[RMDB]
RNA sequence: GGGAACGACUCGAGUAGAGUCGAAAAUCGGUGAGUACAUUUUCGAGCGCAUUGAUUAUAGUGAUGCUGUAUCCUACAAGUCUAGUACAACGUAUAAACUGACUGUAGGUGACAUCUUCGUACUUACGUGAUUCAUUAUGUUCGCAUAAUGAAUCACAAAAGAAACAACAACAACAAC
Reactivity to 2A3 in 0.01 (KOAc 150mM, MgCl2 10mM, bicine 150mM(pH8.5), 24C), signal-to-noise 7, nucleotides 027 to 126: u080c030g030g000u010g010a010g010u020a000c010a070u040u050u030u160c090g050a030g040c060g000c060a030u010u050g060a060u150u230a080u170a180g130u110g060a050u020g000c040u040g050u050a040u000c000c000u000a000c010a130a070g000u000c020u190a010g010u040a050c070a180a030c180g090u140a060u070a210a140a020c020u010g000a000c000u000g010u000a000g000g010u000g000a000c000a010u010c000u060u050c070g000u010a010c000u010u010a010c040
Reactivity to DMS in 0.01 (KOAc 150mM, MgCl2 10mM, bicine 150mM(pH8.5), 24C), signal-to-noise 5, nucleotides 027 to 126: u010c070g000g010u010g000a000g010u010a020c030a110u010u000u010u000c110g030a110g020c140g010c040a040u000u010g010a090u020u010a120u010a100g020u010g000a030u010g020c040u010g020u010a060u000c000c000u000a000c010a040a110g000u000c010u020a040g010u000a090c160a090a120c300g000u000a150u010a040a090a040c060u000g000a020c000u000g010u000a010g000g000u000g000a110c140a020u000c030u000u000c120g010u000a030c020u000u010a030c090